[RMDB]
RNA sequence: GGGAACGACUCGAGUAGAGUCGAAAAUAGUUUUAGGUGUUCGCACCUAAAACUAAAAAACCGUAGGACUUUGUGGACAUGCCAUUUCGAAAGAGAUGAGCAACAGCCACAUGGUCCUAAACGGAAAAAUGUGACGUUCAUUCGUGAACGUCACAAACUAUACAAGUAAGUUCGCUUACUUGUAUAGAAAAGAAACAACAACAACAAC
Reactivity to DMS in 0.01 (KOAc 150mM, MgCl2 10mM, bicine 150mM(pH8.5), 24C), signal-to-noise 2, nucleotides 027 to 156: u000a020g000u000u000u000u000a000g020g050u000g020u000u000c300g020c030a030c000c000u010a000a010a010a020c020u020a000a040a140a070a040a110c010c010g020u000a040g010g010a030c000u000u000u020g060u020g020g000a090c080a300u000g010c000c010a060u000u000u000c000g000a140a170a220g000a050g040a000u000g010a230g020c010a030a050c060a150g020c000c000a020c000a000u000g000g010u000c000c000u000a000a020a050c030g020g000a000a070a050a160a200u000g010u010g000a030c000g030u000u000c010a160u000u010c300g050u000g020a010a000c000g000u000c010a000c010a000a040a120
Reactivity to 2A3 in 0.01 (KOAc 150mM, MgCl2 10mM, bicine 150mM(pH8.5), 24C), signal-to-noise 2, nucleotides 027 to 156: u040a010g000u000u000u010u000a010g010g000u010g050u060u090c240g010c060a000c000c000u000a000a000a000a000c000u010a000a020a000a020a010a000c020c000g020u010a020g020g000a000c000u040u000u010g000u000g020g010a040c030a090u030g000c000c000a000u000u000u000c040g060a110a080a030g000a010g000a010u020g040a070g110c000a020a040c040a060g020c010c000a000c000a000u000g000g000u000c000c000u000a020a010a000c020g040g150a060a020a010a020a060u140g000u000g000a010c000g000u010u000c020a020u070u130c180g090u050g040a000a000c000g000u000c000a000c010a000a000a000